Conditions: 150 mM KOAc, 10 mM MgCl2 and 150 mM bicine (pH 8.5), 24 C. An RNA of 177 nucleotides, treated with 2A3 and DMS and read out base by base. 2A3 adducts were read by reverse transcription with SuperScript II with manganese. Source: RMDB library OK1LIB, as collected in RNAgym.
[RMDB]
RNA sequence: GGGAACGACUCGAGUAGAGUCGAAAAGGUACAAAAGAGUUAAUAGAUUGGUUAAAAGCACAAUCACGACCAUUCUUAUUCUCUACAUCAUUAGCACCUGGGGAUACCAAAGCAAUAACUGAAGCAGACUCCUUCCGAGAUUCGUCUCGGAAGGAGUAAAAGAAACAACAACAACAAC
Reactivity to 2A3 in 0.01 (KOAc 150mM, MgCl2 10mM, bicine 150mM(pH8.5), 24C), signal-to-noise 2, nucleotides 027 to 126: g040g000u020a020c010a090a130a020a000g000a000g050u090u080a020a020u050a000g020a000u010u010g060g000u040u140a210a240a050a130g120c070a120c070a100a300u110c050a040c300g000a000c000c000a000u000u040c000u040u170a060u190u030c030u000c000u020a090c000a120u170c040a040u070u120a000g020c000a000c000c000u000g000g030g090g000a050u040a080c000c030a000a040a000g000c040a000a220u200a110a060c080u040g110a060a000g070c010a000g040
Reactivity to DMS in 0.01 (KOAc 150mM, MgCl2 10mM, bicine 150mM(pH8.5), 24C), signal-to-noise 2, nucleotides 027 to 126: g040g000u000a080c130a040a120a070a090g000a000g000u040u040a060a000u000a000g000a040u000u000g000g010u000u000a030a040a080a140g020c300a080c200a060a110u070c100a110c280g000a080c000c020a000u000u000c000u010u040a050u000u000c000u000c000u010a040c210a090u040c130a240u050u000a180g050c030a060c040c080u000g000g080g000g000a060u000a020c000c020a000a040a180g030c140a080a030u000a040a160c100u000g000a040a060g000c010a230g040